Structure probing data (DMS and 2A3) for a 177-nucleotide construct.

[RMDB]
RNA sequence: GGGAACGACUCGAGUAGAGUCGAAAACGAAGACGUCGUUGACGAACACGCGCACGAAAUUGCUCUCGAUCAAAUCGUCGAAGAAAUAUAACUUCUUGGCCCGAACGUUCGCGACGUGCGCCACCGCGAUCGGAGAAUACUUCGGUAUUCUCCGAUCAAAAGAAACAACAACAACAAC
Reactivity to DMS in 0.01 (KOAc 150mM, MgCl2 10mM, bicine 150mM(pH8.5), 24C), signal-to-noise 4, nucleotides 027 to 126: c060g000a100a040g020a100c060g000u010c040g020u030u030g010a070c040g010a050a050c180a070c150g010c190g000c030a010c050g000a050a090a100u040u010g000c040u000c070u010c040g000a040u000c140a070a100a110u060c130g000u010c020g030a010a010g000a040a080a110u020a080u020a090a180c110u010u020c010u000u000g000g040c000c060c040g020a040a140c090g030u000u000c110g010c020g000a070c010g000u010g000c040g010c010c060a110c060c040g000c240
Reactivity to 2A3 in 0.01 (KOAc 150mM, MgCl2 10mM, bicine 150mM(pH8.5), 24C), signal-to-noise 8, nucleotides 027 to 126: c070g050a080a010g160a010c020g010u040c030g020u120u160g050a060c020g040a120a030c080a030c060g020c010g000c010a030c060g090a030a100a070u110u110g020c010u000c000u010c050g070a100u060c080a030a150a120u110c060g040u020c020g040a050a020g030a020a140a000u270a030u070a110a130c070u020u010c010u050u100g050g010c040c040c010g010a130a040c040g030u060u050c030g000c000g020a030c010g020u070g030c020g010c000c020a060c010c040g050c080

Source: RMDB library OK1LIB, as collected in RNAgym.